[RMDB]
Chemical mapping of a 177-nucleotide RNA with DMS.
The DMS profile rests on 910 reads.
RNA sequence: GGGAACGACUCGAGUAGAGUCGAAAACGAAUGUGCAGUUUUUCUUGAUCGUGAAAAUGCCACCAAAAUUCUGAGUCGGCCAAAGAGGUAUAAUUCAGGUAAACUGGAAGAGUUUGUUCGAGGGAACCACCUACACCCUUUUCGAAGGGUGUAGGUGAAAAGAAACAACAACAACAAC
Reactivity to DMS in 0.01 (KOAc 150mM, MgCl2 10mM, bicine 150mM(pH8.5), 24C), signal-to-noise 1, nucleotides 027 to 126: c040g030a080a100u000g010u020g010c020a070g000u010u000u010u010u020c010u000u010g010a070u000c180g030u000g000a120a030a090a090u000g000c040c030a110c090c070a050a050a100a140u000u000c060u000g000a000g000u000c060g000g000c010c050a050a030a110g000a090g000g000u000a060u000a040a100u000u000c020a000g030g000u010a070a040a100c050u000g000g000a050a110g030a130g000u000u000u010g000u000u000c060g020a190g000g010g000a080a060c120